[RMDB]
RNA sequence: GGGAACGACUCGAGUAGAGUCGAAAAGAUAUGGAAAGAACUACAGCCUUAUCCAGCUUGGACCUCGGAAACGAGCUAGCUGUGUAGGCUGCUUUCCUAAGUCAAAACCUGUCCUUCGGGACAGGAACGAUAUUCACCUCUUCGGAGGUGAAUAUCGAAAAGAAACAACAACAACAAC
Reactivity to 2A3 in 0.01 (KOAc 150mM, MgCl2 10mM, bicine 150mM(pH8.5), 24C), signal-to-noise 2, nucleotides 027 to 126: g000a020u060a030u060g000g010a020a050a030g020a100a000c130u170a080c300a000g000c010c000u190u170a160u140c060c000a000g010c000u070u110g130g110a220c060c000u000c000g020g030a030a030a030c010g000a000g050c020u000a000g000c010u040g040u070g050u210a010g010g000c000u010g030c000u010u020u000c020c010u040a090a020g020u020c020a000a020a140a220c000c000u000g020u000c030c010u040u070c300g110g010g010a000c000a010g000g000a000a000
Reactivity to DMS in 0.01 (KOAc 150mM, MgCl2 10mM, bicine 150mM(pH8.5), 24C), signal-to-noise 2, nucleotides 027 to 126: g010a050u010a290u000g000g000a000a010a020g000a110a040c070u020a300c020a020g010c010c000u000u010a120u010c070c000a020g000c000u000u000g040g010a110c300c000u030c010g000g010a110a070a120c000g000a020g000c020u000a000g020c000u000g020u000g020u000a000g000g000c000u000g020c000u000u000u000c000c000u000a060a070g020u030c060a090a080a120a110c010c000u000g010u000c000c000u000u010c140g030g000g030a010c000a000g000g000a040a050
This 177-nucleotide RNA was probed chemically with 2A3 and DMS.
The RNA was probed in 150 mM KOAc, 10 mM MgCl2 and 150 mM bicine (pH 8.5) at 24 C.
2A3 adducts were read by reverse transcription with SuperScript II with manganese.